[RMDB]
RNA sequence: GGGAACGACUCGAGUAGAGUCGAAAACAGUCAAGGUGAAGGCGGGCCAGACCAUCGCCGCAUUCUACCAGAGCACCGUCAUGAUCUUUGGCACGAUGGCUCGCUACAUCCUGAGAGUUAGGGAAAAACCUCACCACGAGUUCGCUCGUGGUGAGGUAAAAGAAACAACAACAACAAC
Reactivity to DMS in 0.01 (KOAc 150mM, MgCl2 10mM, bicine 150mM(pH8.5), 24C), signal-to-noise 2, nucleotides 027 to 126: c000a170g000u000c040a060a050g000g000u000g040a250a100g010g000c000g070g020g010c030c060a070g020a140c150c100a050u000c140g030c060c050g000c120a090u000u000c010u040a130c030c020a070g000a070g000c100a030c040c050g020u010c130a060u010g010a010u000c020u000u000u040g010g080c050a050c160g000a130u000g000g020c000u000c000g000c000u000a130c040a030u000c000c040u010g000a120g010a120g000u000u040a070g000g010g000a100a050a070a160
Reactivity to 2A3 in 0.01 (KOAc 150mM, MgCl2 10mM, bicine 150mM(pH8.5), 24C), signal-to-noise 1, nucleotides 027 to 126: c040a030g090u030c000a010a070g040g010u050g110a120a140g080g050c020g020g000g000c050c020a030g030a110c000c070a140u060c090g000c000c050g000c010a060u150u090c000u020a040c030c060a020g000a010g080c030a040c050c050g110u120c060a130u140g130a080u030c030u060u020u070g020g000c000a000c090g100a060u080g000g000c000u020c000g010c000u030a010c010a030u040c000c000u040g000a020g000a000g070u080u090a100g020g060g040a000a040a010a050